Description
The record gives the reactivity of an RNA of 177 nucleotides to DMS and 2A3. Reactivities are given for positions 27 through 126. For DMS, 1,359 sequencing reads were counted. For DMS the reverse transcriptase was MarathonRT.
RNA sequence: GGGAACGACUCGAGUAGAGUCGAAAAGUGACAGAGACUGUGUCACUCAGACUGACUGUCUGACUCAGUCUCUCAGACAGUCUCUCUCUGACAGACUGUGACACUCUCAGUGUCUGUGUCUCAGUGACGUCUUCGGAACAUUCGUGUUCCGAAGACGAAAAGAAACAACAACAACAAC
Reactivity to DMS in 0.01 (KOAc 150mM, MgCl2 10mM, bicine 150mM(pH8.5), 24C), signal-to-noise 1, nucleotides 027 to 126: g080u010g010a050c050a050g000a130g000a020c050u010g030u000g010u000c000a040c030u000c020a030g010a200c130u000g020a000c020u010g020u000c000u000g020a010c060u000c080a110g010u010c100u000c170u000c020a000g010a020c020a040g000u000c000u010c080u010c090u000c020u010g000a070c240a060g020a040c100u000g000u000g000a010c000a000c020u010c220u000c100a140g000u000g000u080c000u000g000u000g010u000c000u010c000a100g010u010g020a160
Reactivity to 2A3 in 0.01 (KOAc 150mM, MgCl2 10mM, bicine 150mM(pH8.5), 24C), signal-to-noise 1, nucleotides 027 to 126: g050u050g010a010c020a040g060a000g040a090c050u070g030u000g010u040c010a010c010u040c000a060g010a040c030u050g050a080c010u010g000u000c000u010g000a000c020u010c100a110g110u090c050u020c040u000c140a030g000a060c000a020g000u000c000u000c000u000c010u000c000u030g050a040c080a140g110a040c010u050g080u040g120a000c020a010c000u090c040u060c120a040g060u050g010u030c010u030g150u000g050u090c000u010c020a040g040u080g040a060